RNA sequence: GGGAACGACUCGAGUAGAGUCGAAAAGAUAUGGAUAGCAGGGAGCGUUAACUAUACGCUCGGAAACGAGCGUACGAAUUAACGCAUCGAUCUGCUAUCCUAAGUCAAACAUGGCUUCGGCCAUGAACAAUGACGCGUUCUUCGGAACGCGUCAUUGAAAAGAAACAACAACAACAAC
Reactivity to DMS in 0.01 (KOAc 150mM, MgCl2 10mM, bicine 150mM(pH8.5), 24C), signal-to-noise 1, nucleotides 027 to 126: g000a080u000a300u050g010g000a010u000a010g000c010a030g000g000g010a010g030c000g050u010u000a000a040c150u030a300u000a000c000g000c000u000c010g000g000a090a060a200c030g000a030g000c010g030u000a010c070g010a020a050u000u000a020a010c000g030c000a260u010c190g000a030u000c000u000g000c000u000a000u000c000c010u000a020a090g010u010c020a110a130a160c020a020u000g000g000c010u000u010c160g000g000c020c010a000u020g000a090a090